[RMDB]
Background:
The record gives the reactivity of an RNA of 177 nucleotides to 2A3 and DMS. For DMS the reverse transcriptase was MarathonRT. The reactions ran in a buffer of 150 mM KOAc, 10 mM MgCl2 and 150 mM bicine (pH 8.5), at 24 C. The DMS profile rests on 6,348 reads.
RNA sequence: GGGAACGACUCGAGUAGAGUCGAAAAUGAAUAGCGUUCUCACCCUGGAGUGGGGAGAACGUGAAAUGCUCCGGCGCCAGAGGAUGUGGCUGCGGCCGAUUAGGUAGACGGUGGGGUAACGGCCCACGCUGUUAAGAUAGUUCGCUAUCUUAACAGCAAAAGAAACAACAACAACAAC
Reactivity to 2A3 in 0.01 (KOAc 150mM, MgCl2 10mM, bicine 150mM(pH8.5), 24C), signal-to-noise 6, nucleotides 027 to 126: u100g030a050a080u030a060g000c000g010u010u000c030u030c060a300c020c010c030u130g220g230a220g160u180g030g010g010g000a000g000a010a000c000g000u000g010a010a000a020u050g000c000u010c020c020g030g000c030g020c010c020a030g020a040g160g030a090u120g060u090g130g020c050u060g020c010g050g000c010c000g030a060u090u120a060g040g030u020a040g030a070c060g020g060u030g000g000g000g020u010a050a020c010g050g000c000c000c000a010c050
Reactivity to DMS in 0.01 (KOAc 150mM, MgCl2 10mM, bicine 150mM(pH8.5), 24C), signal-to-noise 5, nucleotides 027 to 126: u010g010a060a070u000a270g010c000g000u000u000c000u000c010a140c010c000c000u000g020g000a140g040u000g010g010g000g000a010g000a010a000c010g000u000g000a050a100a100u000g000c030u010c030c010g010g010c040g010c040c040a070g010a110g000g010a080u010g010u000g010g000c040u000g030c100g000g000c030c020g010a110u000u010a060g010g010u000a090g010a070c100g000g010u000g000g000g000g000u000a070a110c180g000g010c000c010c050a060c090